[RMDB]
RNA sequence: GGGAACGACUCGAGUAGAGUCGAAAAGAUAUGGACACGUCAUACCGUGGCUUGGACCUCGGAAACGAGCUAGCCACGUAUGAGCGUGUCCUAAGUCAAAAGUUCAUGCCGUUCGCGGCAUGAACAAUCAAUCAGCACUCUUCGGAGUGCUGAUUGAAAAAGAAACAACAACAACAAC
Reactivity to 2A3 in 0.01 (KOAc 150mM, MgCl2 10mM, bicine 150mM(pH8.5), 24C), signal-to-noise 2, nucleotides 027 to 126: g020a030u060a000u180g020g000a000c000a000c010g060u020c010a000u000a020c110c200g020u000g000g020c020u070u270g120g100a300c040c030u010c030g000g030a050a080a020c000g000a010g040c040u010a010g010c000c000a010c000g000u010a000u000g000a010g000c010g000u010g000u000c000c010u010a000a010g000u010c010a010a000a090a090g000u000u010c000a010u000g010c000c000g050u040u110c300g000c030g080g000c010a020u040g000a000a000c010a010a020
Reactivity to DMS in 0.01 (KOAc 150mM, MgCl2 10mM, bicine 150mM(pH8.5), 24C), signal-to-noise 3, nucleotides 027 to 126: g010a050u000a300u010g000g000a000c000a010c000g020u010c010a010u000a010c140c100g070u000g010g000c010u000u010g050g010a140c300c010u000c010g020g010a110a080a130c010g020a020g010c020u000a020g000c010c000a000c020g000u000a000u010g010a050g030c010g000u000g000u000c000c000u010a000a080g000u010c040a060a050a090a110g000u000u000c000a010u010g000c000c000g020u000u010c190g020c000g000g000c000a000u000g000a010a000c010a060a050